[RMDB]
RNA sequence: GGGAACGACUCGAGUAGAGUCGAAAACUUAUAUCCAAAGGAAAGAGAGCUGAAGACUAAGGCACGAUUUUUCUCGCUGAUGUCUUAUAACAUGCGGAUGUACAUAACUGCAACAGAAGAAAUACUCCAAGAGCUGCGUUUUCGAACGCAGCUCUUGAAAAGAAACAACAACAACAAC
Reactivity to DMS in 0.01 (KOAc 150mM, MgCl2 10mM, bicine 150mM(pH8.5), 24C), signal-to-noise 1, nucleotides 027 to 126: c070u070u000a000u000a000u050c060c110a000a100a060g010g000a000a000a130g000a020g000a030g000c080u000g000a010a060g000a030c000u000a060a200g000g050c000a090c300g000a080u020u000u040u000u000c000u000c200g000c000u050g000a070u000g000u000c000u010u000a300u020a090a000c000a090u000g020c070g010g000a150u010g000u010a070c240a020u000a140a110c080u000g140c260a000a200c090a130g000a080a140g000a050a180a050u000a000c000u030c050
Reactivity to 2A3 in 0.01 (KOAc 150mM, MgCl2 10mM, bicine 150mM(pH8.5), 24C), signal-to-noise 2, nucleotides 027 to 126: c000u000u060a030u000a040u260c040c010a040a020a000g060g040a050a040a000g130a000g000a080g000c100u110g030a000a000g000a020c000u040a020a040g070g000c050a050c110g000a050u080u000u100u160u140c070u030c060g010c070u040g010a090u160g000u000c000u000u000a050u000a000a040c000a040u000g000c000g020g020a060u030g110u060a040c000a050u170a250a140c000u200g000c170a130a090c010a100g060a170a000g100a000a240a000u210a100c030u110c070
Background
Structure probing data (DMS and 2A3) for a 177-nucleotide construct. Reactivities are rounded to 0.1 and cut off at 0 and 3. The RNA was probed in 150 mM KOAc, 10 mM MgCl2 and 150 mM bicine (pH 8.5) at 24 C.